An RNA of 207 nucleotides, treated with 2A3 and DMS and read out base by base. Values cover nucleotides 27 to 156. The data come from the RNA Mapping Database (RMDB), library RNAMAK.
RNA sequence: GGGAACGACUCGAGUAGAGUCGAAAACAGGCUGUUCGCAGCCUGAAAAAAACCUUUGUGUUAGACAUGCGAUGAUAGCGAGGCCCAUUGGGCUCCCCACCGCUAGAAAGUCGCAACAGCUAACACUCUGGUAAAAAGCACGCGUUCGCGCGUGCAACCUGUAGAUAUGCUUCGGCAUAUCUACAGGAAAAGAAACAACAACAACAAC
Reactivity to 2A3 in 0.01 (KOAc 150mM, MgCl2 10mM, bicine 150mM(pH8.5), 24C), signal-to-noise 4, nucleotides 027 to 156: c000a000g000g000c020u060g050u110u200c280g010c110a000g000c000c010u020g030a060a000a000a000a000a000a000c010c000u020u000u020g000u000g000u000u010a010g000a090c060a170u070g010c000g010a020u050g020a060u060a010g020c030g000a020g000g010c010c020c080a250u280u300g020g010g010c010u080c020c020c000c000a030c000c000g020c000u000a020g070a130a250a020g050u000c000g030c000a010a020c040a030g030c000u000a000a000c010a010c010u000c010u000g000g020u100a070a080a020a050a040g010c010a000c010g030c000g050u050u130c240g000c010g000c000g140u010g000c000a010a020
Reactivity to DMS in 0.01 (KOAc 150mM, MgCl2 10mM, bicine 150mM(pH8.5), 24C), signal-to-noise 2, nucleotides 027 to 156: c000a010g020g020c020u010g020u000u010c300g050c060a010g120c010c000u060g000a000a000a030a070a060a120a060c020c000u000u000u010g050u050g000u000u000a000g010a050c050a300u000g020c000g020a010u010g000a230u000a030g010c000g000a300g000g000c030c000c030a300u000u020g050g050g030c020u020c110c050c030c050a300c130c020g000c010u010a020g000a090a100a230g000u000c000g010c000a050a070c090a200g000c010u010a000a000c010a020c010u000c010u000g010g000u000a000a070a050a120a120g040c000a030c000g050c000g020u000u010c300g000c010g020c000g000u000g010c000a000a000